[RMDB]
RNA sequence: GGGAACGACUCGAGUAGAGUCGAAAACAAAAAACAAUAUCACACGCUGAGUGAUAUUUCAGUAAAACUUCCUUUGCUUUUAAUACUUCAUCACCAGCCCCACCAAUUAAUCCUACCCGUAGUUUUUUACGUGUGAAAAAUUCAAAAGAACGAUGUGAUGUCCUAACGAAUUCGUUCGUUAGGACAUAAAAGAAACAACAACAACAAC
Reactivity to 2A3 in 0.01 (KOAc 150mM, MgCl2 10mM, bicine 150mM(pH8.5), 24C), signal-to-noise 2, nucleotides 027 to 156: c000a000a080a020a050a020a000c030a040a040u030a010u030c010a030c020a030c060g110c080u030g010a040g090u010g010a020u020a060u020u100u090c030a030g060u030a070a040a160a200c000u080u080c040c000u060u080u100g090c020u140u150u090u210a130a090u130a150c030u090u080c010a060u020c050a080c020c010a010g030c000c040c050c000a040c030c050a000a020u060u100a030a040u060c000c030u030a030c030c000c020g020u050a050g030u040u040u040u090u050u110a010c030g020u020g000u020g090a060a000a000a000a000u170u090c120a100a010a050a110g060a090a030c070g000a030u080g080u060g050
Reactivity to DMS in 0.01 (KOAc 150mM, MgCl2 10mM, bicine 150mM(pH8.5), 24C), signal-to-noise 1, nucleotides 027 to 156: c060a020a050a080a130a100a130c110a040a010u000a020u000c020a000c010a100c110g030c110u010g000a300g000u010g020a000u000a030u010u010u020c070a130g000u000a030a080a050a080c080u000u020c040c080u000u000u000g000c060u000u020u000u010a030a060u000a060c050u010u000c020a100u010c050a040c040c020a080g020c010c000c040c000a070c090c040a080a090u000u010a100a160u000c020c010u000a030c000c040c030g060u000a040g000u000u000u000u000u000u000a020c020g000u000g070u020g000a040a070a050a080a110u000u000c110a080a080a040a040g020a080a120c000g030a130u010g040u000g050
This 207-nucleotide RNA was probed chemically with 2A3 and DMS. For DMS the reverse transcriptase was MarathonRT. 2A3 adducts were read by reverse transcription with SuperScript II with manganese. For DMS, 1,703 sequencing reads were counted. Conditions: 150 mM KOAc, 10 mM MgCl2 and 150 mM bicine (pH 8.5), 24 C. Source: RMDB library OK3TST, as collected in RNAgym.